Overview:
Conditions: 150 mM KOAc, 10 mM MgCl2 and 150 mM bicine (pH 8.5), 24 C. This 207-nucleotide RNA was probed chemically with 2A3. For 2A3 the reverse transcriptase was SuperScript II with manganese. Source: RMDB library ARCHII, as collected in RNAgym. The 2A3 profile rests on 585 reads.
RNA sequence: GGGAACGACUCGAGUAGAGUCGAAAACAUGUCGGAGCGGACAGUAUUUUGAACCCAGAGCGCCAUUUUUUUGAUGUCAGACAAAAAUACGGUGGCCGCUCGCGUCCCUCCUCAUGUCGAGUCGCUCCUCCGAGGAUGCAGUUCACAGACUAAACGGCCCUUACAAUCUCUUCGGAGAUUGUAAGGGAAAAGAAACAACAACAACAAC
Reactivity to 2A3 in 0.01 (KOAc 150mM, MgCl2 10mM, bicine 150mM(pH8.5), 24C), signal-to-noise 2, nucleotides 027 to 156: c000a010u020g010u050c140g000g000a010g010c100g030g000a000c050a010g110u080a160u050u300u170u300g110a100a070c020c070c140a040g000a000g000c010g000c000c020a030u140u010u000u060u060u060u000g050a070u180g150u210c110a040g080a300c010a010a030a000a030a070u140a110c200g010g010u010g000g080c210c140g000c000u000c000g000c050g000u000c000c010c010u010c000c020u000c000a010u020g000u010c010g000a000g000u000c000g000c000u030c000c000u090c010c020g010a040g020g020a050u050g010c080a050g020u000u130c030a000c000a130g060a010c040u130a090a090a030c080g080g000